An RNA of 207 nucleotides, treated with 2A3 and read out base by base.
For 2A3, 974 sequencing reads were counted.
The RNA was probed in 150 mM KOAc, 10 mM MgCl2 and 150 mM bicine (pH 8.5) at 24 C.
For 2A3 the reverse transcriptase was SuperScript II with manganese.
[RMDB]
RNA sequence: GGGAACGACUCGAGUAGAGUCGAAAAUGGGCGAUGGCUCGCUGUUUUUGUGGCUGGCUUUCAGCGGGCUGGAGGAGCCGGGAGCGGAGGCGGAGGACCGAGCCAAAAACGUCAGCCGAGGCCGGGCAAUAUCGUGGACUGUUCGCAGUCCACGAAAACAGAGUAUUAGCUUCGGCUAAUACUCUGUAAAAGAAACAACAACAACAAC
Reactivity to 2A3 in 0.01 (KOAc 150mM, MgCl2 10mM, bicine 150mM(pH8.5), 24C), signal-to-noise 1, nucleotides 027 to 156: u070g050g000g020c060g030a050u070g030g030c020u020c010g000c010u000g030u030u100u020u140u110g130u070g050g030c030u020g020g010c030u000u070u090c020a010g010c000g000g010g000c000u040g010g010a020g040g040a020g070c060c000g000g030g000a090g040c110g030g070a070g000g060c060g020g020a070g010g030a020c020c050g020a000g040c000c000a020a080a000a030a000c020g050u040c020a030g010c010c010g010a040g010g000c020c030g050g010g000c000a060a050u110a040u160c000g000u000g010g000a010c000u010g020u060u090c220g000c110a000g000u000c000c000a000c000g010a000a000a000